[RMDB]
RNA sequence: GGGAACGACUCGAGUAGAGUCGAAAACGUCAUUGUGUCAUCAUCAAUGUUAAGGGUCUUUUUCUUUGUCGGGAAAAAGACCGUUGAUCACGGCCUGUGAAUGGCAAUCAAGCCACCGUCUUUUCUGUCUUGGUAGUACGUUCGCGUACUACCAAGAAAAAGAAACAACAACAACAAC
Reactivity to DMS in 0.01 (KOAc 150mM, MgCl2 10mM, bicine 150mM(pH8.5), 24C), signal-to-noise 3, nucleotides 027 to 126: c050g000u020c060a030u000u000g020u030g000u020c020a110u030c240a040u000c010a050a090u010g000u050u020a080a100g040g020g020u000c000u000u000u000u000u000c000u000u010u030g010u020c210g020g000g010a000a010a000a000a000g000a020c000c020g000u000u000g000a020u010c120a080c110g000g000c000c000u040g010u030g000a130a130u020g000g020c030a030a040u020c250a090a180g010c050c020a060c070c050g010u030c060u000u000u000u000c050u010g000
Reactivity to 2A3 in 0.01 (KOAc 150mM, MgCl2 10mM, bicine 150mM(pH8.5), 24C), signal-to-noise 5, nucleotides 027 to 126: c020g040u020c020a020u020u090g050u040g020u090c010a050u010c000a000u000c010a040a050u100g060u180u240a170a080g150g000g000u000c000u000u020u010u010u000c020u010u110u170g230u220c130g000g000g000a000a000a000a000a000g010a000c000c000g000u000u010g000a010u030c020a000c080g020g000c010c020u050g000u010g050a100a110u020g000g000c030a030a090u150c090a060a070g010c010c010a020c020c020g070u060c050u020u060u030u010c050u050g060